RNA sequence: GGGAACGACUCGAGUAGAGUCGAAAAGAUAUGGAAUUGGCAGCUUUUGACGAAAUAUUCGGAAACGAAGAUUUCGAUAAGCUGCAAUUCCUAAGUCAAAACUUGCGAUACUUCGGUAUCGCAAGAACCCCUACUGAAAGUUCGCUUUCAGUAGGGGAAAAGAAACAACAACAACAAC
Reactivity to DMS in 0.01 (KOAc 150mM, MgCl2 10mM, bicine 150mM(pH8.5), 24C), signal-to-noise 1, nucleotides 027 to 126: g010a040u000a170u020g000g010a010a000u000u000g030g000c000a000g000c000u000u000u020u000g040a240c040g000a000a030a010u010a060u000u010c000g000g000a070a000a090c000g010a000a000g000a040u000u000u000c010g020a160u000a030a010g020c000u000g020c000a000a000u000u000c000c000u000a000a090g000u000c010a110a070a080a230c010u000u000g000c000g000a010u000a020c000u000u010c180g000g000u000a010u000c000g020c000a000a010g020a070a150
Reactivity to 2A3 in 0.01 (KOAc 150mM, MgCl2 10mM, bicine 150mM(pH8.5), 24C), signal-to-noise 2, nucleotides 027 to 126: g000a000u000a010u060g010g030a000a040u030u080g300g160c010a000g000c010u090u230u300u300g220a050c010g000a000a010a010u040a020u020u010c010g030g000a040a030a010c010g000a010a010g020a020u020u030u010c000g090a070u100a300a000g020c000u000g000c000a000a000u000u020c010c000u000a020a000g000u010c000a000a010a180a230c000u000u010g000c010g000a010u000a000c000u000u060c100g080g000u000a000u000c000g000c000a000a000g030a000a000
Annotation
An RNA of 177 nucleotides, treated with DMS and 2A3 and read out base by base. Reactivities are given for positions 27 through 126. DMS adducts were read by reverse transcription with MarathonRT. The reactions ran in a buffer of 150 mM KOAc, 10 mM MgCl2 and 150 mM bicine (pH 8.5), at 24 C. For DMS, 1,294 sequencing reads were counted. For 2A3, 2,771 sequencing reads were counted. 2A3 adducts were read by reverse transcription with SuperScript II with manganese.